[RMDB]
RNA sequence: GGGAACGACUCGAGUAGAGUCGAAAACAACAAUACUUCGGUAUUGUUGAAAAUGGGCCGUCCAAGAAAAGUGCUUCAAAGAGUGGGAGCACUCGGCAAUAAAAACCAGUUGGUUCGCCAACUGGAACAAUACGGAUCCGUUCGCGGAUCCGUAUUGAAAAGAAACAACAACAACAAC
Reactivity to DMS in 0.01 (KOAc 150mM, MgCl2 10mM, bicine 150mM(pH8.5), 24C), signal-to-noise 1, nucleotides 027 to 126: c000a000a010c000a000a000u000a000c000u000u030c150g020g030u000a010u000u000g000u010u000g000a050a040a110a070u010g010g000g010c000c010g020u000c020c060a090a090g000a100a120a130a040g000u000g000c000u000u010c010a070a110a180g010a180g020u010g000g000g000a010g000c000a010c010u010c030g020g000c020a020a060u000a050a060a100a180a080c000c000a000g020u000u000g000g030u000u020c190g000c010c030a030a010c000u000g000g000a070a090
Reactivity to 2A3 in 0.01 (KOAc 150mM, MgCl2 10mM, bicine 150mM(pH8.5), 24C), signal-to-noise 2, nucleotides 027 to 126: c000a000a000c010a000a000u000a020c010u010u030c130g010g000u000a010u000u010g000u000u000g020a020a000a010a050u110g000g060g000c000c030g040u080c060c040a070a000g200a080a150a000a000g000u000g010c000u010u030c040a100a130a100g140a130g120u260g030g000g010a010g000c010a000c000u010c010g010g020c020a040a050u080a040a060a010a000a020c000c000a010g010u010u000g040g020u030u050c150g020c030c000a000a010c000u000g000g040a000a010